This 177-nucleotide RNA was probed chemically with DMS and 2A3. 2A3 adducts were read by reverse transcription with SuperScript II with manganese. The RNA was probed in 150 mM KOAc, 10 mM MgCl2 and 150 mM bicine (pH 8.5) at 24 C. It was measured as part of the RMDB libraries RFM100 and RFMREP.
RNA sequence: GGGAACGACUCGAGUAGAGUCGAAAAAGCUGAGGUACGCCUCAGCAAGGUCGGCAGACCACCUAGGCAUCGCCUCUGCUCUUUUUAGUGCAGCGCUAAACCUGCUGAGCUCGGUUACGACCGAGCAGGUCUGUCACAAGUUCGCUUGUGACAGACCAAAAGAAACAACAACAACAAC
Reactivity to DMS in 0.01 (KOAc 150mM, MgCl2 10mM, bicine 150mM(pH8.5), 24C), signal-to-noise 1, nucleotides 027 to 126: a040g040c010u000g000a010g000g000u000a050c300g000c020c000u000c050a000g000c070a000a010g000g020u000c030g000g020c270a060g000a150c000c070a070c050c020u000a020g010g010c070a130u000c080g010c000c030u000c000u000g000c010u010c000u000u040u010u040u020a100g070u010g010c000a000g010c300g000c040u000a010a040a120c160c000u000g000c010u010g010a130g050c000u010c010g000g000u050u020a080c160g020a130c010c000g000a000g010c000a020
Reactivity to 2A3 in 0.01 (KOAc 150mM, MgCl2 10mM, bicine 150mM(pH8.5), 24C), signal-to-noise 5, nucleotides 027 to 126: a010g000c000u000g000a000g020g020u050a050c200g090c020c000u000c000a000g030c000a000a000g010g000u010c020g050g060c050a020g000a140c030c010a020c020c020u060a060g050g000c020a060u100c110g040c050c020u050c000u020g020c000u000c010u070u230u040u040u180a050g020u030g040c020a020g020c010g010c100u100a040a060a060c000c000u010g000c020u030g060a010g010c000u000c010g000g010u030u080a100c190g040a020c040c000g000a000g000c000a000